[RMDB]
RNA sequence: GGGAACGACUCGAGUAGAGUCGAAAAGAUAUGGAUUCCCAGACAUGCGUGUGGCUCGGAAACGAGCCAGACGCAACAGCUGGGAUCCUAAGUCAAACAGACCUGGUGCUUCGGCACCAGGUCUGAACUUACAAAGUGAGUUCGCUCACUUUGUAAGAAAAGAAACAACAACAACAAC
Reactivity to DMS in 0.01 (KOAc 150mM, MgCl2 10mM, bicine 150mM(pH8.5), 24C), signal-to-noise 3, nucleotides 027 to 126: g010a030u010a300u000g000g000a010u010u010c000c010c000a010g010a040c070a210u000g010c010g050u000g000u010g000g010c010u000c000g000g000a100a090a210c010g010a030g000c000c000a000g000a010c000g020c000a010a020c190a190g000c010u000g010g010g000a030u000c000c000u000a010a120g000u000c010a140a100a300c020a000g010a010c010c000u000g020g020u000g010c000u000u020c280g030g020c000a010c000c000a000g000g000u000c000u000g010a010a110
The record gives the reactivity of an RNA of 177 nucleotides to DMS. Reactivities are given for positions 27 through 126. For DMS the reverse transcriptase was MarathonRT. For DMS, 3,257 sequencing reads were counted. The RNA was probed in 150 mM KOAc, 10 mM MgCl2 and 150 mM bicine (pH 8.5) at 24 C.